[RMDB]
RNA sequence: GGGAACGACUCGAGUAGAGUCGAAAACUCCGGGGAAGCCUUGGCUUUGGAAUUCAGGCCCAGUUCUAAGUUUAAAAUCAUUGAUGCUGUUCAGUAGUGGGAUCAAUGAUUUUGCUUCACUUAAAUGCCACAAGCUCCCUGAAGAUGGGCUGGAGCACAUAGCCUAUAGCUUCGGCUAUAGGCUAUGAAAAGAAACAACAACAACAAC
Reactivity to DMS in 0.01 (KOAc 150mM, MgCl2 10mM, bicine 150mM(pH8.5), 24C), signal-to-noise 1, nucleotides 027 to 156: c010u000c010c000g040g000g030g030a050a080g040c010c050u010u020g020g060c020u000u020u010g010g020a060a070u010u010c030a070g050g010c000c010c080a130g010u000u000c040u000a060a070g010u000u000u030a010a030a010a030u000c000a020u000u000g000a010u000g020c000u000g000u000u020c110a290g000u000a200g020u020g020g000g020a040u010c000a020a030u000g010a020u000u000u000u000g010c070u000u000c080a070c070u000u000a030a080a060u010g010c000c040a060c080a060a130g000c010u010c010c000c020u000g010a030a090g010a100u000g020g010g060c020u010g010g020a130g010c030a190
Reactivity to 2A3 in 0.01 (KOAc 150mM, MgCl2 10mM, bicine 150mM(pH8.5), 24C), signal-to-noise 2, nucleotides 027 to 156: c030u010c030c010g020g010g000g020a130a060g030c030c030u030u070g020g060c020u100u040u090g020g050a060a070u190u050c020a110g020g030c020c000c000a010g010u060u050c020u080a010a010g020u050u070u190a010a000a000a000u000c000a000u020u010g030a020u060g150c010u060g050u220u110c120a140g150u230a030g060u280g060g020g010a010u030c050a000a000u000g020a000u000u010u010u000g010c010u060u110c040a020c030u050u170a040a130a070u210g020c020c000a040c030a120a020g000c020u000c010c010c000u000g040a010a010g120a070u060g010g010g000c000u020g090g080a060g060c090a000

The record gives the reactivity of an RNA of 207 nucleotides to DMS and 2A3. In probing experiments dimethyl sulfate is read out at A N1 and C N3, which are open when not base-paired. The reactions ran in a buffer of 150 mM KOAc, 10 mM MgCl2 and 150 mM bicine (pH 8.5), at 24 C.